This 177-nucleotide RNA was probed chemically with 2A3 and DMS. Conditions: 150 mM KOAc, 10 mM MgCl2 and 150 mM bicine (pH 8.5), 24 C. For 2A3, 1,207 sequencing reads were counted. DMS adducts were read by reverse transcription with MarathonRT.
RNA sequence: GGGAACGACUCGAGUAGAGUCGAAAAUCUGAUUCCUCGAAUGGUUCCUCUACAAGCACUCACACCAGGAACCCCUAAGGCACUCAUCGUAGAUGAUCGAAAUUUUAGAGGAGUCCAGAAGCUAACGUAUUCAGGUGCGAUUCGUCGCACCUGAAUAAAAAGAAACAACAACAACAAC
Reactivity to 2A3 in 0.01 (KOAc 150mM, MgCl2 10mM, bicine 150mM(pH8.5), 24C), signal-to-noise 2, nucleotides 027 to 126: u040c040u050g000a010u010u010c000c010u010c030g030a100a080u080g030g000u050u020c000c000u000c000u010a100c030a150a050g110c030a020c080u080c010a060c000a000c060c040a010g020g030a010a070c000c000c000c010u050a070a060g080g000c020a040c090u040c030a080u080c030g130u220a050g050a110u040g050a040u080c100g080a090a010a070u080u060u080u060a060g000a020g000g000a000g030u000c010c050a040g010a040a010g010c080u110a060a030c090g060
Reactivity to DMS in 0.01 (KOAc 150mM, MgCl2 10mM, bicine 150mM(pH8.5), 24C), signal-to-noise 1, nucleotides 027 to 126: u030c110u000g030a070u000u010c000c000u000c000g010a060a120u000g000g000u000u010c010c010u000c080u010a000c070a110a120g000c100a050c020u000c030a120c090a140c050c000a120g000g010a030a070c040c010c070c060u030a030a080g000g040c000a040c130u000c030a030u000c230g000u130a000g010a010u030g070a090u030c110g010a010a110a080u000u000u000u000a210g000a000g000g000a000g000u000c050c080a050g000a050a030g010c040u090a050a090c190g000